RNA sequence: GGGAACGACUCGAGUAGAGUCGAAAAGAUGAUAGCAUCAAAAAUCAACAGAAGCUUCCUCCUUGUAUUCAAUAUCCUUAGUGACUUUAUCUUGUUUAAAAAUGAUCUCCAACACUGCAUCUGUUCGUAACGGUAUAGACUUCGGUCUAUACCGUUAAAAAGAAACAACAACAACAAC
Reactivity to DMS in 0.01 (KOAc 150mM, MgCl2 10mM, bicine 150mM(pH8.5), 24C), signal-to-noise 3, nucleotides 027 to 126: g000a060u020g000a160u010a100g000c020a160u020c030a060a080a080a080a110u060c110a080a140c110a080g030a100a090g000c050u000u000c020c020u010c030c030u000u000g050u000a050u000u020c070a030a030u000a060u020c030c020u000u020a070g040u000g010a050c040u000u000u020a050u030c040u010u000g000u020u020u000a020a020a050a090a040u010g000a040u010c030u020c020c010a030a090c050a050c060u000g000c010a020u000c010u000g010u000u010c100g020
Reactivity to 2A3 in 0.01 (KOAc 150mM, MgCl2 10mM, bicine 150mM(pH8.5), 24C), signal-to-noise 4, nucleotides 027 to 126: g090a040u130g040a040u080a120g170c030a030u070c040a110a050a060a060a050u090c110a060a080c010a070g060a080a010g040c030u050u010c000c000u040c000c000u010u030g040u030a080u010u080c040a090a050u060a110u100c010c020u090u050a050g070u040g090a080c020u100u140u050a060u070c040u070u130g180u070u210u170a060a080a020a000a000u170g060a090u030c040u060c030c010a030a030c040a010c060u030g000c000a030u020c010u020g030u000u060c040g010
The data come from the RNA Mapping Database (RMDB), library OK1LIB. This 177-nucleotide RNA was probed chemically with DMS and 2A3. The RNA was probed in 150 mM KOAc, 10 mM MgCl2 and 150 mM bicine (pH 8.5) at 24 C. The DMS profile rests on 4,210 reads. DMS (dimethyl sulfate) methylates the pairing face of unpaired adenines and cytosines.